Overview
The record gives the reactivity of an RNA of 177 nucleotides to DMS. Values cover nucleotides 27 to 126. For DMS the reverse transcriptase was MarathonRT. The data come from the RNA Mapping Database (RMDB), library TTRINS. Conditions: 150 mM KOAc, 10 mM MgCl2 and 150 mM bicine (pH 8.5), 24 C.
RNA sequence: GGGAACGACUCGAGUAGAGUCGAAAAGAUAUGGACCUGAGAACAACUAGUCAGUUGACAUGCUGUGAUGAUCGGAAACGAUCAUCAUAGCAACAGCAACGACUAGUUGUUCUCAGGUCCUAAGUCAGACUUAGUCUAACUUCGGUUAGACUAAGUCAAAAGAAACAACAACAACAAC
Reactivity to DMS in 0.01 (KOAc 150mM, MgCl2 10mM, bicine 150mM(pH8.5), 24C), signal-to-noise 2, nucleotides 027 to 126: g000a050u000a300u010g000g000a000c000c000u000g000a020g000a010a010c000a000a000c010u010a000g000u000c000a210g040u000u000g010a060c090a240u010g000c000u000g050u000g010a000u000g020a000u000c000g000g000a170a080a200c000g010a010u000c000a000u000c010a010u000a000g000c000a000a020c300a250g000c020a010a020c010g020a000c000u010a000g000u000u020g000u000u000c000u000c010a000g010g010u000c020c000u000a000a050g010u000c060a200